[RMDB]
RNA sequence: GGGAACGACUCGAGUAGAGUCGAAAAUGGCGCUCGGGCCACGGUGUCAGGUUCCGCCAGCGCAGGUUCGCCCCGGCCCUGUGCUGAGUUAAAUUUAGAGACUGGAACCUGGUCCUGUCCCCUCACGCAUACAGGAGGAGUUCGCUCCUCCUGUAUGAAAAGAAACAACAACAACAAC
Reactivity to 2A3 in 0.01 (KOAc 150mM, MgCl2 10mM, bicine 150mM(pH8.5), 24C), signal-to-noise 3, nucleotides 027 to 126: u070g020g000c040g000c100u100c160g080g100g000c010c010a010c050g020g010u080g010u030c010a000g000g020u000u010c000c010g000c010c000a010g000c000g000c000a000g020g000u030u060c040g080c020c020c030c020g040g000c020c010c000u000g000u000g000c000u010g030a050g030u040u120a080a080a110u130u200u140a140g050a040g030a140c140u170g000g000a010a000c000c010u000g000g000u020c000c000u030g020u020c000c010c010c020u040c000a080c050g050
Reactivity to DMS in 0.01 (KOAc 150mM, MgCl2 10mM, bicine 150mM(pH8.5), 24C), signal-to-noise 5, nucleotides 027 to 126: u000g010g010c030g010c160u000c250g020g000g010c060c040a050c080g010g000u010g020u000c020a020g010g000u000u000c030c000g000c140c010a010g010c020g030c000a000g000g010u000u000c090g010c030c030c030c060g010g000c290c010c030u000g020u000g020c000u000g010a100g010u010u010a040a130a160u000u010u010a160g010a270g000a060c100u010g020g000a020a010c010c010u010g000g000u000c080c010u010g000u000c020c010c010c140u010c120a070c190g010
An RNA of 177 nucleotides, treated with 2A3 and DMS and read out base by base. Values are in units of 0.01, from 0 to 300, in steps of 10. For DMS, 5,798 sequencing reads were counted. Conditions: 150 mM KOAc, 10 mM MgCl2 and 150 mM bicine (pH 8.5), 24 C. It was measured as part of the RMDB library OK2TST.